The record gives the reactivity of an RNA of 177 nucleotides to DMS and 2A3. For 2A3, 1,553 sequencing reads were counted. For 2A3 the reverse transcriptase was SuperScript II with manganese. Reactivities are given for positions 27 through 126.
RNA sequence: GGGAACGACUCGAGUAGAGUCGAAAAUUUGAUCGUAGUUUUACCAUUACCAUCGCGUUGCAACUGGUGGCCACGGUGGUGGCUUUUAUUGGCGUACUGAGCGCGCUGAUGAGUUUGGAAUUGGACCCCUCGUAUUGCAAUUCGUUGCAAUACGAGGAAAAGAAACAACAACAACAAC
Reactivity to DMS in 0.01 (KOAc 150mM, MgCl2 10mM, bicine 150mM(pH8.5), 24C), signal-to-noise 3, nucleotides 027 to 126: u010u000u000g020a070u000c100g010u000a050g010u000u000u000u010a190c040c020a080u000u010a040c040c020a040u000c010g000c030g010u000u020g000c020a100a090c100u000g010g030u000g020g000c010c000a030c030g020g040u010g020g030u010g010g000c020u010u000u020u000a080u000u000g010g020c050g000u010a080c150u000g010a200g010c040g000c010g020c010u020g030a020u000g000a090g020u000u000u000g000g010a060a140u000u000g020g000a170c080c040
Reactivity to 2A3 in 0.01 (KOAc 150mM, MgCl2 10mM, bicine 150mM(pH8.5), 24C), signal-to-noise 2, nucleotides 027 to 126: u070u030u100g070a080u110c080g060u060a120g000u030u010u060u100a060c000c030a040u030u100a030c000c000a010u010c000g000c030g060u060u300g020c030a100a080c080u020g000g050u040g090g000c020c010a040c050g070g170u240g100g000u010g040g040c000u050u050u060u110a090u050u130g030g000c030g000u010a040c020u060g010a030g060c030g000c000g010c050u060g000a030u010g030a000g020u010u030u050g030g050a000a030u060u060g080g050a080c020c010